Structure probing data (2A3 and DMS) for a 207-nucleotide construct.
Reactivities are rounded to 0.1 and cut off at 0 and 3.
Values cover nucleotides 27 to 156.
It was measured as part of the RMDB library OK3TST.
For DMS, 5,359 sequencing reads were counted.
For DMS the reverse transcriptase was MarathonRT.
The reactions ran in a buffer of 150 mM KOAc, 10 mM MgCl2 and 150 mM bicine (pH 8.5), at 24 C.

[RMDB]
RNA sequence: GGGAACGACUCGAGUAGAGUCGAAAAUGUAUUAGGCACUGCCUGUAACUACAAUGUGAGCUUGGUCUAGUCAUUGUAACUUUAAGCUGUGUGCCCCUCUGGAAACCUUUAAAGUUCCUUUCAAUAUAAUGGUCAUGAUGACGAUGACAUGCUUGUGCUAGAGACUACCAUUCGUGGUAGUCUCUAGAAAAGAAACAACAACAACAAC
Reactivity to 2A3 in 0.01 (KOAc 150mM, MgCl2 10mM, bicine 150mM(pH8.5), 24C), signal-to-noise 2, nucleotides 027 to 156: u110g030u050a110u130u110a040g040g000c040a020c210u110g000c000c000u040g020u040a010a010c020u080a020c040a020a020u120g070u070g080a020g010c000u060u150g050g040u100c000u060a010g000u090c020a020u000u080g030u040a040a030c000u000u050u130a100a000g060c080u040g090u040g000u030g080c010c000c010c020u130c030u000g000g060a050a100a110c010c000u050u130u160a120a110a000g000u050u000c010c000u040u060u100c020a100a050u150a010u030a130a190u130g040g010u020c040a020u050g060a060u110g060a030c060g010a040u130g000a000c010a020u050g030c010u040u010g010u050g050
Reactivity to DMS in 0.01 (KOAc 150mM, MgCl2 10mM, bicine 150mM(pH8.5), 24C), signal-to-noise 2, nucleotides 027 to 156: u000g000u010a090u000u010a040g030g030c030a050c060u010g050c010c010u000g000u000a070a110c030u010a050c030a030a130u000g040u000g010a080g000c030u040u000g020g010u000c010u010a240g040u000c000a050u010u000g040u000a020a020c010u000u000u010a060a020g010c040u010g000u010g030u000g020c030c010c030c030u000c090u010g020g000a060a070a060c010c020u000u000u000a080a060a120g020u000u000c000c010u000u010u020c070a090a140u000a120u000a060a090u000g010g010u000c030a070u020g010a070u000g020a060c060g000a120u010g020a030c050a140u010g010c020u000u010g020u000g010